[RMDB]
Background: Structure probing data (DMS and 2A3) for a 177-nucleotide construct.
RNA sequence: GGGAACGACUCGAGUAGAGUCGAAAAGAUAUGGAGAACUACUUCCAUAUCAGGGUCGGAAACGACCCUGAGUAUGAAGAAGCUCCUAAGUCAAACUAGAUGCAAACGUUCGCGUUUGCAUCUAGAACUAUUAUUUUGGGUUCGCCCAAAAUAAUAGAAAAGAAACAACAACAACAAC
Reactivity to DMS in 0.01 (KOAc 150mM, MgCl2 10mM, bicine 150mM(pH8.5), 24C), signal-to-noise 3, nucleotides 027 to 126: g010a040u000a300u020g010g000a010g000a060a100c050u010a160c010u000u000c060c090a020u000a040u000c000a010g000g010g010u000c000g000g000a090a110a170c010g000a010c000c000c000u000g010a010g020u010a020u000g000a060a050g000a250a120g010c000u000c000c010u000a080a190g010u010c000a150a130a300c000u010a000g000a000u000g000c000a000a000a010c010g030u000u010c300g010c020g010u000u000u000g000c010a000u000c010u000a000g000a070a150
Reactivity to 2A3 in 0.01 (KOAc 150mM, MgCl2 10mM, bicine 150mM(pH8.5), 24C), signal-to-noise 2, nucleotides 027 to 126: g010a010u060a050u140g020g040a010g030a190a100c030u240a140c010u160u010c100c000a030u020a010u090c010a000g000g010g000u010c000g000g010a150a060a160c010g000a000c000c000c010u010g010a010g000u060a090u060g020a070a140g010a010a010g050c020u000c000c010u020a170a070g000u070c070a100a080a190c040u010a010g000a010u000g000c000a000a000a000c020g080u110u140c300g040c030g290u000u000u000g000c000a000u000c010u000a000g000a000a000